[RMDB]
RNA sequence: GGGAACGACUCGAGUAGAGUCGAAAACAUUCGAAAACCUCAUGUGAUUACAAUUUGUAAGUUUGCCAGAGUAAGGUGUAGCUUCUUAUCCAUAUGAUUAGAUUCCUAACAUGAUAAUCAUUUUGACCGGCAAGUAAUAUUUCGAUAUUACUUGCCGAAAAGAAACAACAACAACAAC
Reactivity to DMS in 0.01 (KOAc 150mM, MgCl2 10mM, bicine 150mM(pH8.5), 24C), signal-to-noise 3, nucleotides 027 to 126: c060a130u000u000c090g010a090a040a080a090c060c040u000c020a040u000g010u010g000a100u010u010a020c120a170a070u010u010u000g020u000a040a040g030u000u020u010g010c050c060a110g020a090g040u030a030a110g030g030u000g060u010a070g010c030u000u000c040u000u030a110u010c070c020a030u010a030u000g000a080u000u000a020g020a160u010u010c060c030u010a050a080c200a040u010g000a120u000a030a040u050c020a050u020u010u000u000g010a160c270
Reactivity to 2A3 in 0.01 (KOAc 150mM, MgCl2 10mM, bicine 150mM(pH8.5), 24C), signal-to-noise 6, nucleotides 027 to 126: c000a050u150u190c020g030a010a010a040a050c000c030u040c020a070u050g010u050g060a060u080u160a080c070a100a200u060u080u130g090u130a040a020g030u030u050u090g000c020c010a060g030a050g210u130a170a020g010g000u080g040u040a010g000c010u010u010c000u020u070a040u060c040c030a100u050a030u140g020a020u000u070a000g040a090u010u100c000c010u040a050a040c040a030u070g050a050u110a100a040u100c090a100u040u060u070u140g080a050c090

Chemical mapping of a 177-nucleotide RNA with DMS and 2A3. Conditions: 150 mM KOAc, 10 mM MgCl2 and 150 mM bicine (pH 8.5), 24 C.